[RMDB]
RNA sequence: GGGAACGACUCGAGUAGAGUCGAAAAUACCUCAUCCCCAAGGACGCCAAUGGAGCUUCGGUGGUGAGCAGCACCCUCAGCGAACCAAAACGGGGCAUGGGCGGUUCGGCGGUGUUCAUAGCGCGCAUACUUUGCCCACUUUCGAGUGGGCAAAGUAAAAAGAAACAACAACAACAAC
Reactivity to DMS in 0.01 (KOAc 150mM, MgCl2 10mM, bicine 150mM(pH8.5), 24C), signal-to-noise 1, nucleotides 027 to 126: u020a080c090c020u000c060a110u000c010c010c000c070a150a090g000g020a060c060g010c020c050a100a090u000g020g000a080g000c030u000u000c130g000g000u010g000g000u000g000a160g010c040a070g010c050a190c080c000c000u000c070a100g000c030g000a080a070c020c030a010a040a080a090c140g010g000g000g030c050a080u000g020g020g000c050g000g000u010u000c030g000g050c120g000g010u000g010u000u000c050a100u000a110g010c020g030c050g030c110a240